[RMDB]
RNA sequence: GGGAACGACUCGAGUAGAGUCGAAAACAAAGAAAGAAAGAAACCGUCUCUGCUAGUCUCACGGUAACCACGUUGAAAUCGCAACGAAAGAAGCUCGCACUCAACUUCAACGGCUUAACGAGUGCAAAAAACUUACUGAUCUUCGGAUCAGUAAGAAGACAAAUCAUAGCUUCGGCUAUGAUUUGUCAAAAGAAACAACAACAACAAC
Reactivity to 2A3 in 0.01 (KOAc 150mM, MgCl2 10mM, bicine 150mM(pH8.5), 24C), signal-to-noise 1, nucleotides 027 to 156: c030a030a120a040g230a040a130a020g080a070a120a090g040a050a070a010c030c010g060u060c070u030c020u230g040c000u000a080g040u090c040u010c080a030c050g060g000u040a060a080c040c000a030c030g000u020u040g140a180a110a180u200c090g060c040a010a010c000g040a120a040a040g060a000a000g030c110u250c270g020c010a010c000u000c010a050a050c000u020u000c010a060a010c020g030g030c000u050u030a020a030c030g010a000g040u000g000c040a000a000a000a000a180a000c000u000u000a000c000u000g000a000u010c020u060u040c180g100g000a000u000c020a000g000u000a000a000g010a010a030
Structure probing data (2A3) for a 207-nucleotide construct. Reactivities are given for positions 27 through 156. The RNA was probed in 150 mM KOAc, 10 mM MgCl2 and 150 mM bicine (pH 8.5) at 24 C.